[RMDB]
This 177-nucleotide RNA was probed chemically with 2A3 and DMS. For DMS, 1,603 sequencing reads were counted.
RNA sequence: GGGAACGACUCGAGUAGAGUCGAAAAGGCGUCGUCAAGCUUUGAAGGGCUCGCCUCCUGGGCGGACGAGGUGCUGUGAUGCUCGACGAGCUGGAACGCCAACGCGUAGCCCGCCAACUGCGGCUACGAGGCCUGUACACUUCGGUGUACAGGCCUCAAAAGAAACAACAACAACAAC
Reactivity to 2A3 in 0.01 (KOAc 150mM, MgCl2 10mM, bicine 150mM(pH8.5), 24C), signal-to-noise 1, nucleotides 027 to 126: g000g000c000g020u030c010g020u030c090a080a000g000c010u000u080u180g080a090a090g000g000g000c010u000c000g020c010c000u000c000c000u060g030g070g030c080g050g130a020c040g070a010g000g030u060g000c160u090g050u080g040a050u250g060c000u020c020g040a050c040g000a010g000c010u000g000g020a010a020c010g000c030c010a030a010c040g010c020g020u000a000g020c070c080c080g040c000c060a090a110c150u240g010c010g000g000c020u000a000c010
Reactivity to DMS in 0.01 (KOAc 150mM, MgCl2 10mM, bicine 150mM(pH8.5), 24C), signal-to-noise 2, nucleotides 027 to 126: g010g010c010g000u000c080g000u020c050a150a030g010c010u000u000u000g030a080a300g010g020g010c010u000c020g010c000c010u000c030c020u000g010g000g010c150g010g000a090c070g000a040g000g000u000g010c210u000g010u010g000a070u000g010c000u000c020g010a250c100g010a030g010c000u000g000g000a080a050c000g000c000c010a110a080c230g010c080g020u000a030g010c090c000c050g020c000c110a070a100c190u000g010c000g020g000c020u000a000c010